[RMDB]
RNA sequence: GGGAACGACUCGAGUAGAGUCGAAAAGAGCCUUGGUUCGCCAAGGCUCAAAAAAAUUCAGGUGAUUUGCUACCUUUAAGUGCAGCUAGAAAUUCAAAGGAAAAAGGCACAAGUUCGCUUGUGCCAAGAUUAGUUCUCAGUUCGCUGAGAACUAAUCAAAAGAAACAACAACAACAAC
Reactivity to DMS in 0.01 (KOAc 150mM, MgCl2 10mM, bicine 150mM(pH8.5), 24C), signal-to-noise 2, nucleotides 027 to 126: g020a030g000c000c000u000u010g010g010u000u000c170g040c020c010a020a030g020g000c000u020c000a000a000a020a120a040a050a090u010u000c090a020g020g010u000g000a100u010u010u010g010c000u000a000c000c000u000u010u010a010a010g000u000g010c000a020g000c300u010a080g000a040a080a080u030u020c070a070a150a110g020g000a030a050a060a120a100g010g010c010a010c000a010a000g010u000u020c210g010c000u000u000g000u000g040c000c000a010a010
Reactivity to 2A3 in 0.01 (KOAc 150mM, MgCl2 10mM, bicine 150mM(pH8.5), 24C), signal-to-noise 1, nucleotides 027 to 126: g000a010g030c010c000u010u010g070g030u020u150c100g070c100c000a000a000g000g050c010u020c000a000a010a010a000a000a000a000u130u010c010a000g070g010u020g080a300u000u000u150g000c000u010a030c000c000u080u220u160a030a010g020u010g010c010a010g000c010u010a020g130a080a100a010u300u220c130a210a050a090g090g030a140a110a110a000a000g010g000c000a000c030a010a000g030u040u000c180g070c060u000u010g010u010g000c000c020a000a000